[RMDB]
RNA sequence: GGGAACGACUCGAGUAGAGUCGAAAAGAGUAAUGCUUUGUGAGACGGUUGACUUAAGUGCCAACAGAUUCAACUGUUCGGUCAAACGAGCCAGACGCACCGGUGCCGUGGCAACUUCGUGUCCAGCAGGUUGUUGCUUGUUCGCAAGCAACAACCUAAAAGAAACAACAACAACAAC
Reactivity to DMS in 0.01 (KOAc 150mM, MgCl2 10mM, bicine 150mM(pH8.5), 24C), signal-to-noise 1, nucleotides 027 to 126: g020a080g020u010a110a040u030g010c050u000u000u030g000u000g000a230g040a050c070g000g010u000u000g040a020c130u000u000a090a160g010u000g020c080c030a030a020c050a020g010a130u010u010c240a150a090c040u000g010u000u010c110g000g000u000c130a020a070a100c150g010a130g000c020c040a040g030a070c140g050c130a040c060c060g010g000u020g030c010c030g030u010g030g010c040a020a020c070u000u000c070g000u020g010u010c050c020a210g000c160
Reactivity to 2A3 in 0.01 (KOAc 150mM, MgCl2 10mM, bicine 150mM(pH8.5), 24C), signal-to-noise 1, nucleotides 027 to 126: g090a000g030u110a140a000u120g020c050u080u130u140g160u150g000a080g010a040c000g010g110u020u020g000a050c040u090u130a210a150g050u040g140c000c000a000a020c000a020g010a150u140u180c040a150a110c000u040g030u000u000c060g040g050u070c020a000a000a080c060g000a000g090c050c000a010g030a060c070g000c060a020c020c020g010g090u060g050c120c000g120u040g040g000c020a000a000c000u150u070c050g080u000g050u190c060c020a050g060c090